Structure probing data (DMS and 2A3) for a 177-nucleotide construct. The RNA was probed in 150 mM KOAc, 10 mM MgCl2 and 150 mM bicine (pH 8.5) at 24 C. Values cover nucleotides 27 to 126. For 2A3 the reverse transcriptase was SuperScript II with manganese. It was measured as part of the RMDB library OK2TST.

RNA sequence: GGGAACGACUCGAGUAGAGUCGAAAAUAACCAGCAAUCAGCAUGGUAUAAUCUGUGGCGAAUCCGCCAAUUGCUGUACCAAUAGCAAAGGUAAUCAUCGCGAAUAAGUAAAGCUGACGCGUUGAAACACGAGGAUGCGAUUCGUCGCAUCCUCGUGAAAAGAAACAACAACAACAAC
Reactivity to DMS in 0.01 (KOAc 150mM, MgCl2 10mM, bicine 150mM(pH8.5), 24C), signal-to-noise 1, nucleotides 027 to 126: u000a160a040c060c000a000g010c060a130a280u030c030a070g030c060a230u030g000g070u000a070u000a090a170u000c100u000g000u000g000g040c000g000a110a200u000c070c040g070c040c030a090a090u000u040g010c140u000g000u010a110c130c190a060a100u070a080g040c070a000a110a190g010g000u010a110a090u030c000a030u000c030g030c000g000a040a140u000a070a090g010u030a140a030a100g000c040u000g000a100c000g000c000g010u030u000g030a000a260a070
Reactivity to 2A3 in 0.01 (KOAc 150mM, MgCl2 10mM, bicine 150mM(pH8.5), 24C), signal-to-noise 1, nucleotides 027 to 126: u080a020a050c040c000a030g000c040a050a100u200c050a090g030c040a110u030g110g000u080a030u030a040a150u200c010u080g040u070g050g030c000g130a050a240u160c110c090g000c040c090a040a120u050u030g000c020u010g020u130a160c090c010a130a060u030a040g010c040a040a140a050g090g020u120a020a080u080c020a010u040c010g000c000g000a060a040u170a250a000g100u090a090a160a110g100c100u020g040a040c010g000c020g020u030u050g020a030a060a000